[RMDB]
RNA sequence: GGGAACGACUCGAGUAGAGUCGAAAAAAGGUGCCAUCAUAUCGGUUAAGAACUCUUAACUCUGAUGGCUUUCGAGUUAUGUGGUCCAUUGAAGCUCUCCCUUCAAAUGGUCGUACAGUUCCGUGAAAUUAGAUAAUCGAUUCGUCGAUUAUCUAAUAAAAGAAACAACAACAACAAC
Reactivity to DMS in 0.01 (KOAc 150mM, MgCl2 10mM, bicine 150mM(pH8.5), 24C), signal-to-noise 9, nucleotides 027 to 126: a080a090g010g010u000g010c000c000a010u000c010a050u010a130u010c260g000g000u000u000a010a010g010a240a160c300u010c010u000u000a000a010c000u000c100u000g000a010u000g000g000c010u000u000u000c010g010a070g010u000u000a060u010g010u000g010g000u000c000c000a020u000u000g000a030a070g000c130u010c120u010c120c180c000u000u000c020a040a040a050u000g010g010u000c020g020u000a030c030a120g010u000u000c010c010g010u010g010a070a080
Reactivity to 2A3 in 0.01 (KOAc 150mM, MgCl2 10mM, bicine 150mM(pH8.5), 24C), signal-to-noise 6, nucleotides 027 to 126: a000a000g110g010u050g010c040c000a000u010c010a010u080a050u240c070g030g000u020u000a020a020g050a300a260c060u020c000u300u010a000a000c010u000c030u090g010a000u010g000g000c000u000u040u010c010g000a010g010u070u070a090u170g040u040g020g020u000c010c000a000u000u020g010a010a010g010c020u020c000u050c120c000c000u000u000c010a050a070a110u020g000g000u010c040g020u060a020c020a040g000u030u000c010c020g040u120g100a180a210